[RMDB]
RNA sequence: GGGAACGACUCGAGUAGAGUCGAAAAAUCAGCAUGUCGGAGGAGGAUGAGCCGGAGGGGUCCGAUUCGGGAUCGGCCUCGAUGGAGUUGCGAUUGACAUGCUCGGUGUCUUCCAGUUGACUGGCCAUCCUAUGCAGGCAUUCGUGCCUGCAUAGGAAAAAGAAACAACAACAACAAC
Reactivity to DMS in 0.01 (KOAc 150mM, MgCl2 10mM, bicine 150mM(pH8.5), 24C), signal-to-noise 3, nucleotides 027 to 126: a050u000c050a020g000c040a020u000g010u000c010g030g020a170g000g010a130g020g000a080u010g000a160g030c000c000g000g010a300g000g000g000g000u010c010c010g000a050u000u010c290g030g010g020a140u000c030g000g000c020c000u010c000g140a300u000g000g010a050g010u000u000g010c060g020a150u000u000g000a020c020a010u000g000c010u000c060g020g010u000g010u010c060u000u000c010c000a060g000u010u010g000a080c070u000g000g010c100c030a170
Reactivity to 2A3 in 0.01 (KOAc 150mM, MgCl2 10mM, bicine 150mM(pH8.5), 24C), signal-to-noise 1, nucleotides 027 to 126: a010u030c000a010g010c000a020u010g020u020c000g090g160a090g030g050a040g080g010a090u080g100a130g060c000c030g010g030a070g020g010g030g040u200c070c030g050a040u080u150c120g090g170g070a020u000c010g000g020c020c000u010c000g090a020u020g010g020a000g020u090u110g040c060g000a050u030u080g020a000c000a010u010g010c000u010c030g000g040u030g000u000c000u060u040c010c000a030g030u080u170g090a090c040u040g070g010c000c030a030
The data come from the RNA Mapping Database (RMDB), library OK2TST. Chemical mapping of a 177-nucleotide RNA with DMS and 2A3. Reactivities are given for positions 27 through 126. The RNA was probed in 150 mM KOAc, 10 mM MgCl2 and 150 mM bicine (pH 8.5) at 24 C. DMS adducts were read by reverse transcription with MarathonRT.